[RMDB]
RNA sequence: GGGAACGACUCGAGUAGAGUCGAAAAUGGAAGCACAUCCGGUCGAGCGCCGUCGACAGGAGCCUCUGUAGAGAACGCCGUAUCCCUACCACCCCUCCAGACGGAGGAAGGGGGCGGGAGCGCCGGACGGUGAUGAGAUCUUCGGAUCUCAUUACUGAAAAGAAACAACAACAACAAC
Reactivity to DMS in 0.01 (KOAc 150mM, MgCl2 10mM, bicine 150mM(pH8.5), 24C), signal-to-noise 9, nucleotides 027 to 126: u030g000g000a070a080g010c070a080c120a180u010c010c010g000g000u010c090g010a120g000c040g010c060c040g010u010c030g000a040c040a040g000g000a130g000c080c040u010c010u010g010u010a050g000a120g010a100a160c040g000c080c010g010u010a100u010c000c000c000u010a170c020c020a060c020c020c000c000u000c000c010a170g040a140c230g000g000a040g000g000a030a030g000g010g000g010g010c300g000g000g010a040g000c030g000c080c010g000g010a140
Reactivity to 2A3 in 0.01 (KOAc 150mM, MgCl2 10mM, bicine 150mM(pH8.5), 24C), signal-to-noise 9, nucleotides 027 to 126: u100g020g010a040a020g020c040a040c010a180u000c010c010g010g020u080c080g030a060g060c050g010c040c060g120u050c020g020a020c010a020g030g030a070g030c020c020u070c010u030g040u070a040g020a010g010a140a020c010g000c000c000g020u040a300u060c010c000c000u020a060c010c020a070c020c010c000c000u000c000c010a100g060a290c180g060g010a010g010g000a030a180g000g000g000g010g000c020g000g000g000a010g010c010g000c010c000g010g010a010

The record gives the reactivity of an RNA of 177 nucleotides to DMS and 2A3. Values are in units of 0.01, from 0 to 300, in steps of 10. The 2A3 profile rests on 51,567 reads. For DMS the reverse transcriptase was MarathonRT. The reactions ran in a buffer of 150 mM KOAc, 10 mM MgCl2 and 150 mM bicine (pH 8.5), at 24 C. It was measured as part of the RMDB library OK1LIB.